[RMDB]
RNA sequence: GGGAACGACUCGAGUAGAGUCGAAAAUUUGCUGAAAAGGAAGAGCUGAUGUUGGUUCACAGGUGAAGGCUUGGGAGCCUUGUAGGGAUGGGGAGGAGCCUGCCCUGGACAAACCAGGGCAAGCUAAUGAGGACAUCCGAUUCGUCGGAUGUCCUCAAAAAGAAACAACAACAACAAC
Reactivity to DMS in 0.01 (KOAc 150mM, MgCl2 10mM, bicine 150mM(pH8.5), 24C), signal-to-noise 1, nucleotides 027 to 126: u030u000u000g010c040u000g000a050a050a150a070g000g010a080a090g020a120g030c030u010g010a080u000g010u020u000g030g010u000u010c040a010c040a050g010g010u000g000a150a040g000g010c020u000u010g010g000g000a050g000c010c020u000u000g030u000a050g000g000g000a110u000g000g010g100g000a210g000g020a040g000c000c050u000g010c010c000c010u030g000g010a190c210a040a120a170c000c000a000g020g000g020c000a000a000g000c010u000a050a120
The record gives the reactivity of an RNA of 177 nucleotides to DMS.
It was measured as part of the RMDB library OK2TST.
For DMS the reverse transcriptase was MarathonRT.